[RMDB]
RNA sequence: GGGAACGACUCGAGUAGAGUCGAAAACUGGUCGUGUCCAAUCACGUCUCCUGGUUGGACGUGCUCGCGUUGCGGUCGGUGUGCCCGAUGCGACUGUUGGCCAAGUCGGAGGUGCGCGGUUGGCCCCUGGUAGGUGUGCUCGCGGUGCGGGCGGGCACACCCACGUACCAUUCGUGGUACGUGGGUGAAAAGAAACAACAACAACAAC
Reactivity to 2A3 in 0.01 (KOAc 150mM, MgCl2 10mM, bicine 150mM(pH8.5), 24C), signal-to-noise 4, nucleotides 027 to 156: c040u060g030g000u060c070g020u030g030u130c000c000a000a010u030c010a010c050g070u030c040u020c020c020u010g020g050u020u000g080g030a030c020g020u030g020c040u000c010g010c020g030u010u020g060c120g060g030u040c060g110g200u170g070u190g080c020c000c000g010a020u020g000c020g010a010c030u050g060u120u090g050g000c020c000a050a030g280u140c050g010g030a020g010g020u160g050c040g000c020g020g010u020u020g030g000c010c010c000c020u030g040g040u060a080g020g070u040g010u020g050c000u000c020g000c040g020g070u130g070c080g030g030g000c000g010g000g000c000a010
Reactivity to DMS in 0.01 (KOAc 150mM, MgCl2 10mM, bicine 150mM(pH8.5), 24C), signal-to-noise 1, nucleotides 027 to 156: c060u000g010g010u010c040g010u000g030u000c010c020a040a050u020c020a020c050g020u000c050u000c050c000u020g010g000u000u000g010g000a010c010g010u000g010c090u000c000g040c050g040u010u040g020c100g020g020u000c010g030g030u010g030u010g020c040c000c010g000a050u000g020c020g020a010c030u000g020u050u010g020g020c030c010a050a090g020u010c210g010g020a100g020g010u000g030c030g000c040g010g000u000u010g000g000c020c000c000c000u000g010g020u010a060g000g030u000g020u010g010c000u000c000g010c000g030g010u000g020c080g010g020g010c010g020g020g040c000a260
An RNA of 207 nucleotides, treated with 2A3 and DMS and read out base by base. For DMS, 8,393 sequencing reads were counted.